Structure probing data (2A3 and DMS) for a 177-nucleotide construct. In probing experiments dimethyl sulfate is read out at A N1 and C N3, which are open when not base-paired. The RNA was probed in 150 mM KOAc, 10 mM MgCl2 and 150 mM bicine (pH 8.5) at 24 C.

RNA sequence: GGGAACGACUCGAGUAGAGUCGAAAAGGGUACUUCGCGGAGGAAUUCGGCGUGUUGGGAUUCGGUGCAGAAUCCCAUGACGCGUUCCACGCCGGAGCGGUUGUACCAGGAGCGGUCGAAGAAUACGUGCUUUUCAGUGAUUCGUCACUGAAAAGCAAAAAGAAACAACAACAACAAC
Reactivity to 2A3 in 0.01 (KOAc 150mM, MgCl2 10mM, bicine 150mM(pH8.5), 24C), signal-to-noise 2, nucleotides 027 to 126: g060g000g000u060a030c020u060u040c130g110c060g300g070a110g070g080a110a120u070u020c010g050g000c010g030u010g050u060u060g010g000g000a000u000u000c020g070g180u300g100c040a030g040a020a000u020c000c000c000a010u030g020a020c030g030c030g060u020u020c000c000a000c000g000c000c000g000g010a010g020c020g010g020u040u010g020u010a000c000c000a000g020g040a030g030c050g000g010u050c050g060a090a030g060a090a060u120a110c080g050
Reactivity to DMS in 0.01 (KOAc 150mM, MgCl2 10mM, bicine 150mM(pH8.5), 24C), signal-to-noise 3, nucleotides 027 to 126: g020g010g000u000a010c020u000u010c050g020c020g000g000a180g010g010a100a240u000u000c060g030g000c010g020u000g000u000u000g020g010g010a020u000u000c020g010g020u010g020c260a140g010a000a020u000c000c000c000a010u000g000a060c090g010c060g000u000u000c040c000a050c020g010c010c030g010g010a050g030c030g000g000u010u000g020u000a060c020c010a130g000g000a070g020c050g010g000u000c040g010a130a100g000a100a070u010a080c200g010